An RNA of 207 nucleotides, treated with 2A3 and DMS and read out base by base. The 2A3 profile rests on 5,194 reads. For DMS, 3,880 sequencing reads were counted. The data come from the RNA Mapping Database (RMDB), library OK3TST. Reactivities are rounded to 0.1 and cut off at 0 and 3. DMS adducts were read by reverse transcription with MarathonRT. The reactions ran in a buffer of 150 mM KOAc, 10 mM MgCl2 and 150 mM bicine (pH 8.5), at 24 C.
RNA sequence: GGGAACGACUCGAGUAGAGUCGAAAACUGAAGUCUCUCUCCUGAUCGAAGCUCUGACUCUAGAGAGCUAGGAAGUCAGGAUCCUGAUCGAGAUCGAUCGACUAGUCAGAGGAGAGAGACUAGUCCUCUUCCUGAAGAGUCUCGAUCUCAGCUUCGAUCCUAUCCAUUUUUUCGAAAAUGGAUAGGAAAAAGAAACAACAACAACAAC
Reactivity to 2A3 in 0.01 (KOAc 150mM, MgCl2 10mM, bicine 150mM(pH8.5), 24C), signal-to-noise 5, nucleotides 027 to 156: c050u080g050a090a020g060u020c020u010c000u010c000u020c080c040u030g030a030u040c010g010a020a000g000c010u000c000u020g010a040c010u010c020u110a040g050a030g050a060g300c020u010a020g010g090a140a000g020u010c010a000g010g010a010u030c020c090u170g070a090u030c030g000a000g010a020u010c010g010a030u090c120g010a010c010u040a020g160u050c030a030g050a090g120g000a000g000a020g010a020g030a010c010u000a010g000u000c000c010u000c020u030u020c010c020u020g020a040a020g030a010g170u000c010u000c000g010a010u000c000u000c010a010g000c000u000u000c000g020a030
Reactivity to DMS in 0.01 (KOAc 150mM, MgCl2 10mM, bicine 150mM(pH8.5), 24C), signal-to-noise 2, nucleotides 027 to 156: c040u020g010a050a180g020u000c000u000c010u010c020u010c020c000u000g000a080u000c010g030a100a060g020c020u000c020u010g000a060c060u020c080u000a100g030a230g020a190g010c040u010a050g040g010a080a070g010u000c020a030g020g010a030u010c040c070u020g020a090u010c030g000a040g000a030u000c020g000a070u000c080g020a050c000u010a030g010u000c030a060g020a180g030g000a040g000a040g020a090g040a030c040u010a040g000u000c040c030u000c040u010u030c040c010u010g020a120a060g010a080g010u000c010u040c000g010a030u010c000u000c020a070g010c020u010u000c030g010a170